[RMDB]
RNA sequence: GGGAACGACUCGAGUAGAGUCGAAAAUCUACGCAAAAUUAGCUGGGUGUGGUUGUGCACGCCCCUGUAGUCCCAGCUCCAUGGGAGGCCGAGGCAGGAGGGUGUCGUGAGUCCAGGAAUUCAAGGCCUACUCACAAAACUUCGGUUUUGUGAGUAGAAAAGAAACAACAACAACAAC
Reactivity to 2A3 in 0.01 (KOAc 150mM, MgCl2 10mM, bicine 150mM(pH8.5), 24C), signal-to-noise 1, nucleotides 027 to 126: u060c000u060a040c040g000c040a040a120a040a290u140u030a100g050c020u080g000g020g010u040g000u020g040g040u050u130g020u080g040c000a010c000g010c000c000c000c000u090g030u070a040g080u030c010c010c000a000g050c040u080c040c020a130u070g060g020g000a030g000g030c040c010g030a090g020g020c030a030g060g040a040g000g000g050u040g020u030c050g000u030g050a010g030u000c040c060a000g070g080a060a080u100u070c040a070a010g040g000c000
Reactivity to DMS in 0.01 (KOAc 150mM, MgCl2 10mM, bicine 150mM(pH8.5), 24C), signal-to-noise 3, nucleotides 027 to 126: u010c010u000a060c090g020c100a060a040a090a060u000u000a080g020c050u000g010g000g030u000g020u000g000g020u000u000g000u010g010c010a020c020g000c020c000c010c060u000g010u000a070g000u010c010c000c010a060g000c060u000c090c080a140u010g000g020g020a060g000g010c040c040g000a090g010g030c030a080g020g000a060g010g000g000u000g010u020c060g020u000g000a080g020u000c020c040a060g000g000a070a090u000u000c090a070a090g010g020c120